The record gives the reactivity of an RNA of 177 nucleotides to DMS and 2A3.
RNA sequence: GGGAACGACUCGAGUAGAGUCGAAAAAGGUGUAGAUCACCUAUUCUAACUUCACCUGUUUUGAUACCCUGAUGAGGAAAGUCCCAGGACUUGUCAGCUGGGAUAGGCCCCAUGACAGGGCCGCUCGCAGAGCAAUGUUGUUCGCAACAUUGCUCUGAAAAGAAACAACAACAACAAC
Reactivity to DMS in 0.01 (KOAc 150mM, MgCl2 10mM, bicine 150mM(pH8.5), 24C), signal-to-noise 3, nucleotides 027 to 126: a030g010g030u010g010u000a070g020a180u000c070a060c130c100u000a050u010u010c060u010a090a110c090u010u000c060a030c020c020u000g010u000u010u000u000g000a130u000a110c030c020c020u000g000a080u010g000a020g000g030a080a090a120g010u000c000c010c010a060g000g010a110c090u000u000g010u000c110a110g010c060u010g000g000g000a030u000a050g010g020c000c000c030c050a130u000g010a070c170a120g000g010g000c010c030g020c120u000c060g010
Reactivity to 2A3 in 0.01 (KOAc 150mM, MgCl2 10mM, bicine 150mM(pH8.5), 24C), signal-to-noise 2, nucleotides 027 to 126: a040g000g020u030g010u030a090g020a250u260c060a040c020c020u020a140u060u090c060u030a000a170c030u050u020c010a020c060c040u060g160u000u150u130u070g110a080u210a090c000c020c050u080g080a130u050g030a030g060g030a030a110a070g030u010c000c010c010a020g030g080a040c050u060u080g060u180c070a030g040c090u030g000g000g010a000u000a010g000g050c000c000c000c030a090u160g010a020c040a020g020g010g060c000c000g040c000u030c010g050
The reactions ran in a buffer of 150 mM KOAc, 10 mM MgCl2 and 150 mM bicine (pH 8.5), at 24 C.
DMS adducts were read by reverse transcription with MarathonRT.
For 2A3 the reverse transcriptase was SuperScript II with manganese.